Background
Structure probing data (2A3 and DMS) for a 170-nucleotide construct.

RNA sequence: GGGAACGACUCGAGUAGAGUCGAAAACCCAAGCCGAGAUGGGCCUCAGUUCCGAGCGAAGAGCCGAACCGGGAAGAGGAAGCGCCCGAGAGGGAGCCAAUGCCAAAGAGGUGGGGAUCGUCGGAAGAUAGUAUAACGUUCGCGUUAUACAAAAGAAACAACAACAACAAC
Reactivity to 2A3 in 0.01 (KOAc 150mM, MgCl2 10mM, bicine 150mM(pH8.5), 24C), signal-to-noise 9, nucleotides 027 to 129: c000c000c000a010a020g020c020c020g050a020g000a040u060g000g000g000c000c010u050c020a050g010u080u040c040c020g010a020g020c040g010a040a040g010a020g050c050c040g020a020a020c010c010g020g000g000a030a020g020a020g020g010a020a030g030c040g030c020c010c010g050a050g010a030g010g010g000a000g000c000c020a090a050u160g030c030c020a070a100a010g070a020g010g020u110g030g030g000g010a020u030c020g040u010c010g050g010a020a010g010a030u150a040
Reactivity to DMS in 0.01 (KOAc 150mM, MgCl2 10mM, bicine 150mM(pH8.5), 24C), signal-to-noise 9, nucleotides 027 to 129: c000c020c030a100a070g030c020c020g020a020g020a030u030g000g000g000c040c000u030c090a070g020u020u000c040c080g030a040g030c070g010a040a050g000a080g030c060c100g000a050a080c070c070g020g020g040a080a020g000a060g000g000a060a060g000c080g010c020c010c010g000a050g030a080g030g000g030a030g000c080c120a050a050u090g040c070c100a060a100a050g030a040g040g030u040g020g000g030g010a030u000c060g050u030c050g010g000a050a000g030a020u040a110
For 2A3, 39,906 sequencing reads were counted. For 2A3 the reverse transcriptase was SuperScript II with manganese.